[RMDB]
An RNA of 207 nucleotides, treated with 2A3 and read out base by base. For 2A3, 1,083 sequencing reads were counted. The RNA was probed in 150 mM KOAc, 10 mM MgCl2 and 150 mM bicine (pH 8.5) at 24 C.
RNA sequence: GGGAACGACUCGAGUAGAGUCGAAAACAGGACAGUUGUCCGCACCACUACUGACUAUGACCAAGUCACCACCAAGGCUUUGACACCUCAGGGGGUUCUCGAAGCUAAUCUUUUUGAUGGUGAGGACUUUGUUCAAGAACCAAAACCCGGUCAAAUCGUAUAACGUGACGUUCGCGUCACGUUAUACAAAAGAAACAACAACAACAAC
Reactivity to 2A3 in 0.01 (KOAc 150mM, MgCl2 10mM, bicine 150mM(pH8.5), 24C), signal-to-noise 2, nucleotides 027 to 156: c040a010g040g030a020c020a160g080u110u050g000u130c020c030g000c030a000c050c000a020c030u150a030c010u060g100a040c010u050a140u190g030a050c050c010a050a010g010u010c020a000c180c020a020c000c020a130a080g050g000c000u070u050u000g080a110c030a020c010c020u070c070a080g300g000g000g140g100u020u040c030u010c020g040a000a000g010c030u050a090a110u200c110u100u220u110u180u210g180a190u110g010g000u010g010a100g000g000a000c000u000u030u030g000u020u000c010a050a050g050a030a050c050c030a030a050a070a000c060c060c010g030g000u050c030a080a110a090u190c090